[RMDB]
RNA sequence: GGGAACGACUCGAGUAGAGUCGAAAAGUCCGGAUGGAGGAACAUACAUAUAUCAAACCUCCUAGAUAUAUGUAUGAAUGCGUGCGAAGCAUGUACGAACGCACGCUAACGUACAUGCAACGGACAACCUAUGCAUCUCGUUCGCGAGAUGCAUAGGAAAAGAAACAACAACAACAAC
Reactivity to DMS in 0.01 (KOAc 150mM, MgCl2 10mM, bicine 150mM(pH8.5), 24C), signal-to-noise 3, nucleotides 027 to 126: g010u000c020c030g030g010a120u010g000g000a170g010g000a130a190c030a000u010a000c030a030u000a000u000a010u000c010a050a100a200c070c050u000c050c010u000a120g000a010u000a010u000a000u000g000u000a010u000g000a140a130u000g010c040g020u000g000c040g030a130a220g010c070a090u000g010u000a020c040g000a070a250c050g030c020a040c030g020c020u000a010a090c070g010u000a100c000a020u010g010c060a160a180c030g000g000a020c030a080a210
Reactivity to 2A3 in 0.01 (KOAc 150mM, MgCl2 10mM, bicine 150mM(pH8.5), 24C), signal-to-noise 3, nucleotides 027 to 126: g010u000c010c010g040g050a100u070g030g030a050g040g060a080a010c000a000u050a010c000a000u060a010u020a000u050c040a000a100a220c020c030u080c000c010u030a020g000a000u040a000u010a000u020g010u000a000u010g000a090a040u100g010c000g010u000g040c010g040a070a060g060c080a050u170g090u070a020c080g040a170a010c020g000c020a010c020g000c010u010a060a020c010g020u030a010c010a020u030g050c050a110a020c020g020g000a000c000a000a020

Annotation: The record gives the reactivity of an RNA of 177 nucleotides to DMS and 2A3. 2A3 is a SHAPE reagent: it acylates the 2'-hydroxyl of flexible nucleotides of all four kinds. Reactivities are given for positions 27 through 126. For DMS, 2,504 sequencing reads were counted.